[RMDB]
RNA sequence: GGGAACGACUCGAGUAGAGUCGAAAAGAUAUGGACAGCCAACUCCGAUAAGACGAGGUCGGAAACGACCUUCGUCUUUUGACGGAGGGCUGUCCUAAGUCAAAAGCCCUCCGUUCGCGGAGGGCAACAAGACUUCUAAGUUCGCUUAGAAGUCUUGAAAAGAAACAACAACAACAAC
Reactivity to DMS in 0.01 (KOAc 150mM, MgCl2 10mM, bicine 150mM(pH8.5), 24C), signal-to-noise 4, nucleotides 027 to 126: g000a030u000a140u000g010g000a030c010a010g020c000c010a130a300c020u010c000c000g010a170u010a020a010g010a010c000g010a030g000g020u000c000g010g000a040a030a060c000g020a000c000c000u000u010c010g020u000c000u000u000u000u000g020a180c080g010g000a010g000g010g000c000u010g020u000c000c000u000a000a040g000u000c020a110a120a140a180g010c000c000c000u000c000c000g020u000u010c230g020c010g020g010a000g000g020g020c000a000a030
Reactivity to 2A3 in 0.01 (KOAc 150mM, MgCl2 10mM, bicine 150mM(pH8.5), 24C), signal-to-noise 2, nucleotides 027 to 126: g010a000u040a010u080g000g000a000c010a010g000c020c000a250a300c300u020c010c000g130a200u090a270a020g000a000c020g000a000g030g000u000c020g010g000a070a020a000c010g000a000c000c000u040u070c000g000u000c010u000u010u010u030g070a010c000g000g000a030g010g000g010c010u000g010u000c000c010u000a000a000g000u000c000a030a030a060a110g020c020c020c000u000c010c010g030u040u100c300g000c040g210g010a000g000g000g000c010a000a000